[RMDB]
RNA sequence: GGGAACGACUCGAGUAGAGUCGAAAACAGAGGUCACCUUCGGGUGACCUCUGAUUACACCUUUGUGGUUUGUGACACCUUGGAUUUACCCAUUGGGUUGUCAGGUGUACACUGACCACUCUGGUAUUAGAAUGACUUCCCUUCGGGGAAGUCAUAAUCCUUAUGCUGAAUUCGUUCAGCAUAAGGAAAAAGAAACAACAACAACAAC
Reactivity to 2A3 in 0.01 (KOAc 150mM, MgCl2 10mM, bicine 150mM(pH8.5), 24C), signal-to-noise 2, nucleotides 027 to 156: c000a000g020a010g040g030u000c000a010c020c000u050u060c300g100g000g010u000g000a000c000c000u000c000u000g000a000u000u010a020c050a010c000c000u010u000u030g000u000g000g050u010u030u000g010u000g000a000c010a020c000c010u020u110g210g020a040u210u130u280a060c000c000c070a180u080u300g000g000g000u050u010g020u000c010a010g000g000u030g000u070a300c000a000c020u050g000a010c000c000a000c000u000c000u000g000g000u020a140u050u070a070g160a150a010u000g000a010c000u000u000c000c020c000u000u100c160g000g000g000g000a000a000g000u010c000a000u000a000a000
Reactivity to DMS in 0.01 (KOAc 150mM, MgCl2 10mM, bicine 150mM(pH8.5), 24C), signal-to-noise 1, nucleotides 027 to 156: c000a040g010a030g030g020u000c000a020c020c000u000u020c300g060g040g060u010g010a000c000c000u020c000u000g000a000u010u000a090c070a080c000c000u000u000u000g030u000g010g030u000u000u020g040u000g030a140c010a000c020c020u000u000g020g010a120u000u000u000a010c020c010c020a300u000u010g050g020g030u000u000g030u000c000a060g000g030u000g000u000a110c020a020c030u000g000a030c010c000a020c000u000c020u000g050g020u000a130u010u010a170g000a190a060u000g000a060c010u000u000c000c030c000u000u010c300g040g040g000g010a000a010g000u020c000a020u000a010a190